[RMDB]
RNA sequence: GGGAACGACUCGAGUAGAGUCGAAAAAGCACCGGUUACGACCGGUGCAGGGUCAACAGUUCACCCAGGCGUUGCCGGAGCCCCUUGCUCACGCUAAACCUGCUGACAUGGAGUUACGACUCCAUGAUUGUUUGGAACCAUUCGUGGUUCCAAACAAAAAAGAAACAACAACAACAAC
Reactivity to DMS in 0.01 (KOAc 150mM, MgCl2 10mM, bicine 150mM(pH8.5), 24C), signal-to-noise 2, nucleotides 027 to 126: a050g000c010a000c000c000g010g000u000u020a080c180g010a050c010c000g040g000u000g040c030a020g000g000g000u000c020a100a180c010a050g000u000u010c050a030c020c000c030a150g000g010c020g000u010u010g020c120c150g000g000a100g010c060c080c000c050u010u040g000c050u000c010a080c040g000c000u010a010a050a100c130c000u000g010c050u000g000a170c000a010u000g010g000a040g000u000u000a110c140g030a080c010u000c000c000a000u000g010a080
Reactivity to 2A3 in 0.01 (KOAc 150mM, MgCl2 10mM, bicine 150mM(pH8.5), 24C), signal-to-noise 4, nucleotides 027 to 126: a010g030c010a000c010c030g000g020u100u090a150c300g050a020c060c000g000g000u010g000c010a000g010g000g000u020c010a020a020c000a090g020u110u100c010a040c020c000c000a030g060g000c020g030u070u110g080c100c040g020g030a030g050c020c000c000c000u050u200g020c000u010c000a020c000g010c000u010a010a020a050c010c010u050g020c090u020g030a020c000a000u000g000g000a000g010u030u070a090c170g060a010c060u010c000c000a000u000g020a020